Chemical mapping of a 177-nucleotide RNA with DMS and 2A3. DMS adducts were read by reverse transcription with MarathonRT. Values are in units of 0.01, from 0 to 300, in steps of 10. The reactions ran in a buffer of 150 mM KOAc, 10 mM MgCl2 and 150 mM bicine (pH 8.5), at 24 C.
RNA sequence: GGGAACGACUCGAGUAGAGUCGAAAAUGGGAAUUAGUCUUAGAAAAACCCGAUAGUUACUAGUCAAGCAAUCAUGAACUAUAUAACGCCGACGAUUUUGGUUGCCGUCAUUGUGAUCGCCCAUACACCGUUAAAGGGAUUUCGAUCCCUUUAACGGAAAAGAAACAACAACAACAAC
Reactivity to DMS in 0.01 (KOAc 150mM, MgCl2 10mM, bicine 150mM(pH8.5), 24C), signal-to-noise 3, nucleotides 027 to 126: u010g000g000g000a120a190u010u000a090g010u010c060u000u000a110g010a070a110a080a150a160c010c020c030g000a100u010a090g000u000u010a070c100u000a050g020u010c060a130a100g020c040a030a020u000c050a020u000g000a060a060c070u000a040u010a110u000a050a110c110g010c160c040g000a060c120g000a130u000u000u000u000g020g000u000u000g000c030c020g000u000c100a070u010u010g010u010g000a080u000c100g000c000c000c020a100u000a100c190a130
Reactivity to 2A3 in 0.01 (KOAc 150mM, MgCl2 10mM, bicine 150mM(pH8.5), 24C), signal-to-noise 2, nucleotides 027 to 126: u050g010g000g020a030a050u070u020a090g080u000c030u040u090a050g100a100a100a040a050a040c000c000c000g000a020u030a040g000u000u050a030c050u010a060g010u080c030a100a000g010c030a030a070u060c000a050u130g100a060a030c040u000a020u020a020u040a220a020c060g010c110c050g010a070c050g140a240u050u080u080u060g030g000u010u050g000c010c000g050u050c050a030u020u090g000u030g050a030u060c040g030c000c000c000a020u050a080c030a050